The record gives the reactivity of an RNA of 177 nucleotides to DMS and 2A3. It was measured as part of the RMDB library M2PK90. 2A3 is a SHAPE reagent: it acylates the 2'-hydroxyl of flexible nucleotides of all four kinds. The RNA was probed in 150 mM KOAc, 10 mM MgCl2 and 150 mM bicine (pH 8.5) at 24 C. 2A3 adducts were read by reverse transcription with SuperScript II with manganese. DMS (dimethyl sulfate) methylates the pairing face of unpaired adenines and cytosines.
RNA sequence: GGGAACGACUCGAGUAGAGUCGAAAAACUUUGGCCGACGCUGCUAGGCGGGUGCGCACUGCUGUCUGGCCCGGCGCCGCGGUAGGGCGCACGUUUCGCUCUGCGGAGGGUAACCGGGCUGAAAUAACCUCCAGUUUAGAUUCGUCUAAACUGGAGGAAAAGAAACAACAACAACAAC
Reactivity to DMS in 0.01 (KOAc 150mM, MgCl2 10mM, bicine 150mM(pH8.5), 24C), signal-to-noise 3, nucleotides 027 to 126: a080c080u010u000u000g010g010c030c000g010a140c090g020c030u000g010c070u000a140g000g000c010g020g010g010u000g010c030g000c030a070c020u010g010c020u010g000u030c040u010g020g020c000c020c070g000g010c170g000c010c000g010c010g010g020u010a020g020g010g010c010g000c090a020c100g010u010u000u010c010g010c010u010c030u000g020c010g000g020a120g000g010g010u000a100a090c040c020g000g010g000c010u000g000a030a040a070u020a120a170
Reactivity to 2A3 in 0.01 (KOAc 150mM, MgCl2 10mM, bicine 150mM(pH8.5), 24C), signal-to-noise 2, nucleotides 027 to 126: a000c020u080u050u060g020g000c010c010g010a000c000g020c030u050g020c040u060a060g040g040c000g040g050g020u070g020c020g030c020a030c050u060g000c010u030g020u100c090u110g030g000c020c010c000g220g000c110g000c010c000g010c010g080g000u040a020g000g010g000c000g010c010a030c000g010u020u040u110c010g010c020u020c010u040g000c050g080g000a080g070g080g030u020a110a050c020c000g040g030g020c000u070g040a020a060a070u150a070a060